The record gives the reactivity of an RNA of 207 nucleotides to DMS and 2A3. For 2A3, 10,519 sequencing reads were counted. The reactions ran in a buffer of 150 mM KOAc, 10 mM MgCl2 and 150 mM bicine (pH 8.5), at 24 C. It was measured as part of the RMDB library OK3TST. 2A3 adducts were read by reverse transcription with SuperScript II with manganese. For DMS the reverse transcriptase was MarathonRT.
[RMDB]
RNA sequence: GGGAACGACUCGAGUAGAGUCGAAAACUGUCCUGUGUCGAAGUACGUGAGUACUUCACGCUCUACGGGAGUAGAGCGACACAGAUCGUGGAGCGAUGUCUUGGAACUACUCCCGUAGUUCACGUAUGACUCACGUCAUACCAAGACGACAGCCACGGGUAAUAUCCUGAUUCGUCAGGAUAUUACCAAAAGAAACAACAACAACAAC
Reactivity to DMS in 0.01 (KOAc 150mM, MgCl2 10mM, bicine 150mM(pH8.5), 24C), signal-to-noise 2, nucleotides 027 to 156: c030u000g000u010c020c020u000g000u010g000u000c040g000a080a050g020u000a010c000g030u000g000a270g040u000a040c060u000u000c040a140c070g010c070u000c010u000a010c000g000g020g000a270g010u000a000g010a080g010c000g020a040c010a040c010a070g020a020u000c000g030u000g030g020a150g020c010g030a050u000g020u000c010u000u000g000g000a100a130c000u000a040c010u000c100c120c090g030u000a010g010u000u000c030a100c110g030u000a050u000g000a060c010u000c110a150c200g010u000c020a070u000a040c040c010a050a020g020a040c020g020a030c020a040g010c000c040a100c100g010
Reactivity to 2A3 in 0.01 (KOAc 150mM, MgCl2 10mM, bicine 150mM(pH8.5), 24C), signal-to-noise 7, nucleotides 027 to 156: c010u010g010u020c010c000u000g000u000g010u010c020g020a040a010g020u090a010c010g040u060g060a030g010u060a240c010u070u090c030a020c050g050c030u020c000u020a010c000g050g010g010a040g010u000a000g000a020g010c000g000a000c000a000c000a000g020a010u040c020g050u150g150g090a120g110c010g020a020u040g010u000c000u000u010g030g010a030a050c000u000a000c010u030c050c020c030g010u000a010g010u040u080c120a110c090g070u080a040u090g020a020c000u020c070a040c040g000u000c000a000u010a040c000c000a010a000g000a000c010g000a010c010a000g010c010c010a050c060g040